RNA sequence: GGGAACGACUCGAGUAGAGUCGAAAAAAUGACCUUGCUUUCCAGAGUGGGAACAGACUGACAGACGUUUAUUGGAAAGUCUCCCUAGCUCAAAAAGAAAUCAUGGGACGGGCAAACGAGUACAUAAAAUGCUAUGGGGUGCUUGUCAACUGGUUCACCGUACCCUUUACUUCGGUAAAGGGUACGGAAAAGAAACAACAACAACAAC
Reactivity to 2A3 in 0.01 (KOAc 150mM, MgCl2 10mM, bicine 150mM(pH8.5), 24C), signal-to-noise 1, nucleotides 027 to 156: a000a020u180g000a030c040c000u040u060g000c010u000u050u000c000c010a030g040a020g070u150g030g040g000a060a010c040a040g020a010c010u080g010a010c020a020g080a010c050g130u130u190u130a250u060u100g000g000a170a000a000g010u010c050u060c020c000c000u010a060g010c000u010c030a010a140a000a000a000g090a000a140a040u010c040a080u090g020g000g000a000c000g010g010g000c010a010a070a060c050g000a010g030u010a000c030a020u150a070a180a030a000u210g020c010u090a070u190g000g010g000g120u050g040c020u090u050g000u030c030a010a030c040u100g080g090u000u010c010a020
Chemical mapping of a 207-nucleotide RNA with 2A3. For 2A3, 474 sequencing reads were counted. As a SHAPE reagent, 2A3 marks flexible, mostly unpaired nucleotides at the ribose 2'-OH. Source: RMDB library OK3TST, as collected in RNAgym.